[RMDB]
RNA sequence: GGGAACGACUCGAGUAGAGUCGAAAAGCGAAAACGAGAUCGAGCCGGUCAACAUCCGGCCGCAUCCCUACGAAUUCGCGCUGUACUACGACGUUUAAGGACUCUUCGCAGUCCGGGUGUAGAGGGAUGGAGAAGGUCAGUUCGCUGACCUUCUCCAAAAAGAAACAACAACAACAAC
Reactivity to DMS in 0.01 (KOAc 150mM, MgCl2 10mM, bicine 150mM(pH8.5), 24C), signal-to-noise 2, nucleotides 027 to 126: g010c040g000a010a050a060a260c030g010a290g010a020u000c010g020a200g010c000c000g020g000u000c080a200a120c300a100u000c000c000g000g000c000c010g000c130a010u000c000c120c020u020a130c050g000a110a280u010u000c000g020c010g020c050u000g000u000a050c080u010a090c060g000a060c080g000u010u000u030a090a180g020g000a030c000u000c020u020u010c180g000c120a030g000u000c050c010g000g010g020u000g020u000a040g000a060g030g000g040a140
Reactivity to 2A3 in 0.01 (KOAc 150mM, MgCl2 10mM, bicine 150mM(pH8.5), 24C), signal-to-noise 1, nucleotides 027 to 126: g040c000g060a000a000a080a000c050g000a020g020a080u020c010g010a030g020c010c000g010g020u050c060a050a030c060a200u030c000c000g000g000c000c010g000c000a010u020c080c000c000u030a060c020g050a050a050u020u040c000g000c030g030c070u060g060u100a080c000u020a080c060g220a060c090g100u000u000u110a120a020g000g000a050c010u000c090u300u160c280g060c190a000g000u000c010c080g000g000g010u040g000u000a040g010a080g010g090g000a020